[RMDB]
RNA sequence: GGGAACGACUCGAGUAGAGUCGAAAAGACACCAGAGAACAUCAAGAGGAUAGCAAGGGUGGUAGACGCUGUCUCCAUCAGCCUCGAUGCGCCUAGCCCAGCGAUCCACGACGCUAUAAGGGGGUACAGGAUAUGACGACUUCGGUCGUCAUAUCCUAAAAGAAACAACAACAACAAC
Reactivity to DMS in 0.01 (KOAc 150mM, MgCl2 10mM, bicine 150mM(pH8.5), 24C), signal-to-noise 1, nucleotides 027 to 126: g000a180c040a020c010c040a140g000a140g020a030a110c050a020u010c080a080a040g010a050g010g000a050u010a060g010c130a190a180g020g010g040u000g010g000u020a040g020a020c080g010c300u000g000u000c000u000c000c020a010u000c060a150g040c010c040u000c040g000a060u030g050c030g000c010c010u000a080g050c020c040c010a130g010c030g030a060u010c000c100a010c040g020a110c180g010c070u000a050u040a180a210g010g020g000g010g000u000a200c120
Reactivity to 2A3 in 0.01 (KOAc 150mM, MgCl2 10mM, bicine 150mM(pH8.5), 24C), signal-to-noise 1, nucleotides 027 to 126: g030a000c090a060c050c020a000g010a000g010a040a030c010a040u020c000a020a160g010a040g170g050a040u110a070g090c040a000a170g050g070g050u060g030g200u200a010g000a040c090g090c300u140g070u020c000u040c040c000a020u050c000a050g090c010c010u050c010g000a040u100g010c000g000c030c020u080a040g000c000c010c000a000g000c000g130a010u000c000c060a050c050g120a070c030g030c100u080a070u060a300a050g060g020g040g000g000u020a000c040